This 207-nucleotide RNA was probed chemically with 2A3 and DMS. Reactivities are given for positions 27 through 156. Source: RMDB library OK3TST, as collected in RNAgym.

[RMDB]
RNA sequence: GGGAACGACUCGAGUAGAGUCGAAAAGUAAUAGAUAGCAGGAUGACGAGAAAGGGUGCGCUGAUAUCCUGCACGAAUGCUAGCAGUAAAUAGAAUAGCGCUCCUAAUACAACUAGCAACAAAAGGAUAAGGUAUCGUGAUGUCAAUCACAUUGCGACCUAUAAAAUGCAUUCGUGCAUUUUAUAGGAAAAGAAACAACAACAACAAC
Reactivity to 2A3 in 0.01 (KOAc 150mM, MgCl2 10mM, bicine 150mM(pH8.5), 24C), signal-to-noise 6, nucleotides 027 to 156: g020u040a010a130u040a080g090a050u050a020g000c010a000g020g030a030u070g030a040c110g030a020g080a190a070a050g040g010g000u040g000c010g000c010u000g010a010u010a010u120c010c010u000g000c000a010c020g060a090a040u120g030c040u050a030g000c030a010g050u110a030a090a100u100a060g090a070a080u030a050g010c010g000c000u020c000c000u020a070a010u100a050c010a060a020c020u030a000g030c030a010a060c020a020a120a030a010g070g010a060u090a130a040g050g050u060a020u070c000g010u010g010a010u020g030u060c070a090a090u120c010a050c000a020u010u020g000c010g000a010
Reactivity to DMS in 0.01 (KOAc 150mM, MgCl2 10mM, bicine 150mM(pH8.5), 24C), signal-to-noise 4, nucleotides 027 to 156: g020u000a100a080u000a100g000a120u000a110g020c020a040g010g000a080u000g010a260c090g020a160g000a100a090a120g000g000g030u000g000c040g020c010u000g010a150u000a120u000c040c010u000g010c030a100c050g010a100a140u000g010c030u010a020g020c020a110g020u000a060a070a140u010a110g000a060a110u000a070g020c020g010c030u000c030c010u000a070a190u000a100c030a080a050c010u000a020g020c020a060a130c080a060a050a080a070g000g000a110u000a050a060g030g010u010a100u000c040g020u000g020a010u010g020u010c040a120a140u000c180a100c000a030u000u000g010c020g000a120